[RMDB]
RNA sequence: GGGAACGACUCGAGUAGAGUCGAAAAGUGAUAAGAUUCAUCCAAGGCUAAAUAUAAGUUAGGAGAUCGAUAGCAUACAAGUACCGUGAGGGAAAGGUGAAAAGAACUUUGAAAAAAGGUUUAAAAGGAUCUUUCCUUAGUUCGCUAAGGAAAGAUCAAAAGAAACAACAACAACAAC
Reactivity to DMS in 0.01 (KOAc 150mM, MgCl2 10mM, bicine 150mM(pH8.5), 24C), signal-to-noise 2, nucleotides 027 to 126: g000u010g020a100u000a100a190g000a110u010u010c030a100u000c010c000a050a080g010g000c010u000a070a130a140u000a140u010a010a060g040u000u000a200g010g000a030g000a020u000c000g020a110u010a110g000c020a020u000a070c020a010a060g010u000a060c080c000g000u030g000a180g010g010g000a070a120a100g000g010u020g000a130a020a080a110g010a040a040c010u000u010u000g010a000a010a060a050a020a000g000g000u000u000u020a040a030a120a130g000